[RMDB]
RNA sequence: GGGAACGACUCGAGUAGAGUCGAAAAACUGAGUAAUUUCUUCUUCUGUUAACUCUUCCGUAGUAAUGUGAAUAUGUAACUCUUUUUGUGUGCUUUUCAUAGGUGCCUGAUGAUUAAUCUCUGUUUGGGAAUGGGUAUAGUUCGCUAUACCCAUUCCAAAAGAAACAACAACAACAAC
Reactivity to DMS in 0.01 (KOAc 150mM, MgCl2 10mM, bicine 150mM(pH8.5), 24C), signal-to-noise 1, nucleotides 027 to 126: a050c090u050g000a160g000u000a040a100u010u000u000c000u030u010c010u000u030c000u000g050u000u020a040a080c090u010c090u000u020c010c000g000u030a140g000u010a030a090u030g020u030g000a060a060u010a130u030g000u010a040a070c070u050c020u000u000u000u060u000g040u020g010u040g010c080u040u000u000u000c040a050u010a000g000g000u010g000c070c020u010g010a100u000g000a040u020u000a000a030u010c080u000c010u000g010u010u010u000g010
Reactivity to 2A3 in 0.01 (KOAc 150mM, MgCl2 10mM, bicine 150mM(pH8.5), 24C), signal-to-noise 5, nucleotides 027 to 126: a000c030u040g020a010g070u070a080a110u100u010u020c000u020u000c000u080u000c020u030g120u090u110a090a100c030u010c000u080u040c030c050g050u040a040g020u050a070a150u100g040u020g060a050a010u060a070u200g030u060a090a060c030u050c000u080u170u030u080u140g110u020g000u020g060c020u030u080u010u010c040a050u090a110g010g060u060g080c000c020u040g040a080u020g000a020u040u130a150a140u030c020u000c010u060g120u110u050u090g100
An RNA of 177 nucleotides, treated with DMS and 2A3 and read out base by base. DMS adducts were read by reverse transcription with MarathonRT. Reactivities are given for positions 27 through 126. DMS (dimethyl sulfate) methylates the pairing face of unpaired adenines and cytosines. It was measured as part of the RMDB library RFM100. 2A3 is a SHAPE reagent: it acylates the 2'-hydroxyl of flexible nucleotides of all four kinds. The RNA was probed in 150 mM KOAc, 10 mM MgCl2 and 150 mM bicine (pH 8.5) at 24 C.